[RMDB]
Structure probing data (DMS) for a 177-nucleotide construct. The data come from the RNA Mapping Database (RMDB), library OK2TRN. The RNA was probed in 150 mM KOAc, 10 mM MgCl2 and 150 mM bicine (pH 8.5) at 24 C.
RNA sequence: GGGAACGACUCGAGUAGAGUCGAAAAAUGGUACCGAACCACUGGUUACGGGCGCUGGUUUGCAGUGAAAAACGUGAGAUCGCGGCCAGCAGGCUGUUCAGCGGCAGGGCGUCAUCGUCACUUAACAUCUAAUGCCCAACUUCGGUUGGGCAUUAGAAAAAGAAACAACAACAACAAC
Reactivity to DMS in 0.01 (KOAc 150mM, MgCl2 10mM, bicine 150mM(pH8.5), 24C), signal-to-noise 1, nucleotides 027 to 126: a110u000g030g020u020a130c010c010g010a130a050c040c050a080c120u000g020g050u000u000a020c000g020g000g020c050g010c030u000g030g000u010u000u000g040c030a050g020u010g010a080a080a070a070a080c160g010u010g010a100g000a100u000c110g000c030g000g010c020c000a030g020c040a010g010g030c010u000g020u000u000c090a040g010c000g000g000c060a080g000g010g020c030g050u000c140a030u020c060g010u020c030a080c040u000u010a030a100c200a140